RNA sequence: GGGAACGACUCGAGUAGAGUCGAAAAGUCUGUGCGUUUCCAUUUGAGUAUCCUGAAAACGGGCUUUUCAGCAUGGAACGUACAUAUUUAAUAGUAGGAGUGCAUAGUGGCCCGUAUAGCAGGCAUUGAGGCGAGGAUUGUUUCGACAAUCCUCGAAUAGGUAGGUCUUAUUCGUAAGACCUACCUAAAAAGAAACAACAACAACAAC
Reactivity to DMS in 0.01 (KOAc 150mM, MgCl2 10mM, bicine 150mM(pH8.5), 24C), signal-to-noise 3, nucleotides 027 to 156: g020u000c050u010g000u000g010c030g010u000u000u000c010c000a130u000u000u000g020a120g010u010a100u000c040c010u000g010a050a060a140a090c040g010g010g050c080u000u010u000u000c010a130g040c080a040u010g010g000a040a050c030g020u000a010c020a030u000a000u000u000u010a090a120u000a160g020u010a080g000g010a150g000u000g000c050a120u000a140g040u010g010g010c010c010c020g000u010a070u000a140g010c040a050g010g000c070a100u010u000g010a180g020g000c010g000a020g010g000a030u000u020g000u010u000u010c250g020a070c010a030a030u000c010c000u000c000g010a010a030
Reactivity to 2A3 in 0.01 (KOAc 150mM, MgCl2 10mM, bicine 150mM(pH8.5), 24C), signal-to-noise 3, nucleotides 027 to 156: g060u010c040u040g030u040g020c030g040u000u080u090c010c030a020u080u060u040g040a050g020u220a140u120c010c010u020g060a030a010a040a070c070g020g030g000c010u090u070u020u070c050a020g000c020a030u020g030g020a040a020c010g010u010a000c010a000u020a040u010u110u050a150a130u060a030g090u020a040g030g080a030g010u020g010c020a050u100a130g050u030g040g010c020c000c010g000u020a010u050a060g040c020a000g010g000c030a030u050u200g060a030g040g030c000g010a000g000g010a000u000u000g030u010u100u080c060g030a010c000a000a000u000c000c000u010c000g000a010a010
An RNA of 207 nucleotides, treated with DMS and 2A3 and read out base by base. For DMS, 6,054 sequencing reads were counted. DMS adducts were read by reverse transcription with MarathonRT. For 2A3 the reverse transcriptase was SuperScript II with manganese.